The data come from the RNA Mapping Database (RMDB), library TTRDEL. An RNA of 177 nucleotides, treated with DMS and 2A3 and read out base by base. The DMS profile rests on 3,808 reads.
[RMDB]
RNA sequence: GGGAACGACUCGAGUAGAGUCGAAAAGAUAUGGACUGUUCAACAGCGACUACUCGGAAACGAGUAGGUCGACAUGGGACAGUCCUAAGUCAAAACGAUGAGUGAACGUUCGCGUUCACUCAUCGAAGAACGAAUAAGACUUCGGUCUUAUUCGUUCAAAAGAAACAACAACAACAAC
Reactivity to DMS in 0.01 (KOAc 150mM, MgCl2 10mM, bicine 150mM(pH8.5), 24C), signal-to-noise 3, nucleotides 027 to 126: g000a030u000a270u010g000g000a000c000u000g000u000u000c010a130a120c070a130g020c010g000a050c000u000a020c010u000c000g010g000a110a080a100c000g010a010g000u000a010g010g000u010c000g010a060c160a130u010g000g000g000a000c000a020g000u000c000c010u000a000a060g000u000c020a060a080a100a240c010g010a000u000g010a010g030u000g000a010a010c000g030u000u010c250g020c010g000u000u010c010a020c010u000c000a000u000c020g000a040a040
Reactivity to 2A3 in 0.01 (KOAc 150mM, MgCl2 10mM, bicine 150mM(pH8.5), 24C), signal-to-noise 3, nucleotides 027 to 126: g020a010u040a010u080g000g000a000c000u010g040u040u000c050a260a220c050a210g040c000g010a000c000u010a020c010u010c000g010g040a050a050a020c010g000a020g010u020a010g020g080u030c000g040a060c080a150u060g020g000g010a000c000a000g010u000c000c000u000a000a010g010u010c010a000a000a080a120c010g000a000u000g000a000g010u010g010a010a000c000g020u080u110c300g000c000g140u000u000c030a000c000u010c010a000u010c010g000a020a000